RNA sequence: GGGAACGACUCGAGUAGAGUCGAAAACUUUGCGCGCAGCCGCUCUGACUAUUUGUUUUUACACAUUCCGACCAAUUGCCGAGGACGCUCCCGAAAACGAAGACCCGGUAGAAAACCGCCGUCGAUGCUAGUAUUAAGACUUCGGUCUUAAUACUAGAAAAGAAACAACAACAACAAC
Reactivity to DMS in 0.01 (KOAc 150mM, MgCl2 10mM, bicine 150mM(pH8.5), 24C), signal-to-noise 2, nucleotides 027 to 126: c040u010u010u000g030c020g010c050g070c120a160g040c110c050g010c020u000c020u010g020a160c080u000a100u000u010u000g000u000u000u000u020u010a100c160a020c140a150u000u000c170c020g020a010c050c020a090a150u010u000g000c000c000g000a050g020g010a140c010g020c040u000c010c000c000g010a060a070a100a110c110g010a100a180g000a030c020c240c020g000g030u000a160g000a110a040a120a090c020c030g010c120c210g020u000c030g000a050u020g010
Reactivity to 2A3 in 0.01 (KOAc 150mM, MgCl2 10mM, bicine 150mM(pH8.5), 24C), signal-to-noise 2, nucleotides 027 to 126: c020u060u000u100g000c020g000c060g010c060a020g090c140c020g020c000u000c020u040g100a080c030u090a180u100u100u070g080u010u040u030u120u130a070c090a000c010a070u110u050c050c010g020a020c010c010a080a090u150u080g000c000c010g010a010g070g000a090c000g000c010u000c010c000c000g030a130a130a000a020c010g020a070a000g000a010c020c050c040g000g000u060a090g220a080a190a020a000c020c000g020c020c030g020u010c000g010a010u090g050